RNA sequence: GGGAACGACUCGAGUAGAGUCGAAAAGACAAUCCAGGGAACCGGAUGUCAUCACGUUGUUGCAGUACCAGAUGGCAUCUUAAAUCCGAUGUGCAAAUAAGCAUGUAGAAAGCUGAUGUGGGCUUUAAAAACGUGGUGCUGUUCGCAGCACCACGAACGAUGUACACCAGUUCGCUGGUGUACAUCGAAAAGAAACAACAACAACAAC
Reactivity to DMS in 0.01 (KOAc 150mM, MgCl2 10mM, bicine 150mM(pH8.5), 24C), signal-to-noise 1, nucleotides 027 to 156: g030a050c080a050a060u000c050c040a040g000g050g000a110a170c050c140g050g010a020u000g000u020c000a120u010c010a100c150g000u000u010g010u010u000g000c000a080g050u000a070c020c030a120g020a020u000g000g020c010a020u000c020u000u020a090a040a180u000c000c010g030a120u020g040u010g050c020a040a080a150u000a160a220g050c010a050u000g030u000a050g000a120a020a080g010c010u000g020a070u000g020u000g010g010g000c010u000u000u000a030a050a060a070a090c050g040u000g030g020u020g060c000u000g000u020u000c300g020c010a060g040c000a030c010c000a000c000g000a000a050
Reactivity to 2A3 in 0.01 (KOAc 150mM, MgCl2 10mM, bicine 150mM(pH8.5), 24C), signal-to-noise 2, nucleotides 027 to 156: g050a000c050a070a050u110c070c050a070g050g000g000a070a050c030c060g020g020a010u020g040u060c010a000u010c000a020c240g000u020u050g020u000u070g050c100a080g080u140a150c080c000a000g000a000u000g000g010c020a010u000c000u000u000a020a030a000u000c020c000g020a060u060g030u030g050c020a010a140a220u100a220a000g010c000a000u030g010u030a050g140a050a020a010g000c050u080g050a190u100g180u160g080g000g020c020u000u120u190a070a020a000a000a000c000g000u000g000g000u010g010c000u000g040u030u060c230g000c040a000g000c000a010c010c000a000c000g000a020a000
This 207-nucleotide RNA was probed chemically with DMS and 2A3. 2A3 adducts were read by reverse transcription with SuperScript II with manganese. The RNA was probed in 150 mM KOAc, 10 mM MgCl2 and 150 mM bicine (pH 8.5) at 24 C.